An RNA of 207 nucleotides, treated with 2A3 and read out base by base. It was measured as part of the RMDB library OK3TST. For 2A3, 1,763 sequencing reads were counted. Values cover nucleotides 27 to 156. The reactions ran in a buffer of 150 mM KOAc, 10 mM MgCl2 and 150 mM bicine (pH 8.5), at 24 C.

[RMDB]
RNA sequence: GGGAACGACUCGAGUAGAGUCGAAAACGAUCAGUACGUUCGCGUACUGAUCGAAGCUACUGGAGACAGUAGCAAGUCUAAGACCUUGUUAGGCGGAAACAAGGAAAAAUGGAGGACGGCCGGCCCUCCAUACUUAGACAACCGCCAACCGGCCUAAGGUAUCCGAUAUGUUCGCAUAUCGGAUACCAAAAGAAACAACAACAACAAC
Reactivity to 2A3 in 0.01 (KOAc 150mM, MgCl2 10mM, bicine 150mM(pH8.5), 24C), signal-to-noise 2, nucleotides 027 to 156: c020g000a000u000c010a000g010u010a020c020g020u050u090c250g000c010g110u000a000c010u000g000a000u000c000g000a000a000g010c000u000a000c000u000g040g010a040g020a050c000a000g000u000a010g000c010a000a010g000u010c000u000a010a030g030a220c000c000u010u010g030u050u030a130g070g150c120g010g000a030a010a000c000a000a000g000g030a090a140a030a010a000u020g000g010a000g020g000a020c090g020g000c000c010g000g000c020c000c000u000c010c010a000u020a020c000u000u000a000g020a010c010a050a070c110c060g090c070c010a010a030c010c000g000g000c010c000u010a090a030